[RMDB]
RNA sequence: GGGAACGACUCGAGUAGAGUCGAAAAAGACAUUCGUGUCUCGUAUAGGGGUCUCGGGAGACCUCGGGCAAGCGAGGAUCUACCUGAAGCCUCCACGGGUAGGGAGCUUGCAUCGAAGAACGAGACGGAGGCACCCUGGGCAGCUGUUCGCAGCUAACGACAGGUAAGUUUUCGAACUUACCUGUCGAAAAGAAACAACAACAACAAC
Reactivity to 2A3 in 0.01 (KOAc 150mM, MgCl2 10mM, bicine 150mM(pH8.5), 24C), signal-to-noise 2, nucleotides 027 to 156: a000g130a020c040a080u200u160c190g060u070g060u030c050u000c040g060u130a120u170a300g020g020g010g030u070c070u040c140g140g070g000a050g010a000c020c000u040c000g000g040g000c020a010a000g000c030g020a200g040g050a050u000c000u000a030c000c030u060g020a120a020g020c030c000u040c000c010a000c010g000g030g020u020a000g000g010g000a000g000c000u000u010g000c060a140u100c070g080a150a120g040a050a030c000g000a000g020a010c030g000g000a000g010g000c010a010c030c000c030u070g000g080g000c060a020g000c020u050g040u040u180c250g000c070a030g000c000u040a120a080

Structure probing data (2A3) for a 207-nucleotide construct.
Conditions: 150 mM KOAc, 10 mM MgCl2 and 150 mM bicine (pH 8.5), 24 C.
High 2A3 reactivity points to a flexible backbone, as in loops and unpaired stretches.